[RMDB]
RNA sequence: GGGAACGACUCGAGUAGAGUCGAAAAAGUCUCCUAUUACGAUAGGUGACAUUUGAACCAGCGAACAAUUCAGUUGCGAGAUUCGAGGUUUCAGUCUGAAUCAUAGUAGCCAUUACGAUGGCUACAACUCACUCCCGACUGUUCGCAGUCGGGAGAACUUUGGCAUAGCGUUCGCGCUAUGCCAAAGAAAAGAAACAACAACAACAAC
Reactivity to 2A3 in 0.01 (KOAc 150mM, MgCl2 10mM, bicine 150mM(pH8.5), 24C), signal-to-noise 1, nucleotides 027 to 156: a010g000u020c000u030c000c000u000a030u020u050a060c160g060a010u010a010g010g030u010g010a000c010a040u130u150u080g090a060a040c020c000a050g200c000g010a000a000c020a030a110u020u000c000a000g000u000u000g000c010g000a000g000a000u000u030c000g000a010g000g040u190u200u160c030a060g170u020c000u000g010a000a000u070c010a060u060a110g000u000a000g010c010c000a000u000u100a080c240g080a000u000g000g000c000u010a000c000a000a000c040u130c040a090c020u010c020c000c000g000a000c000u010g030u120u090c120g030c120a000g000u000c020g000g000g000a000g000a000a000
Chemical mapping of a 207-nucleotide RNA with 2A3. Source: RMDB library M2RFPK, as collected in RNAgym. Conditions: 150 mM KOAc, 10 mM MgCl2 and 150 mM bicine (pH 8.5), 24 C. 2A3 adducts were read by reverse transcription with SuperScript II with manganese.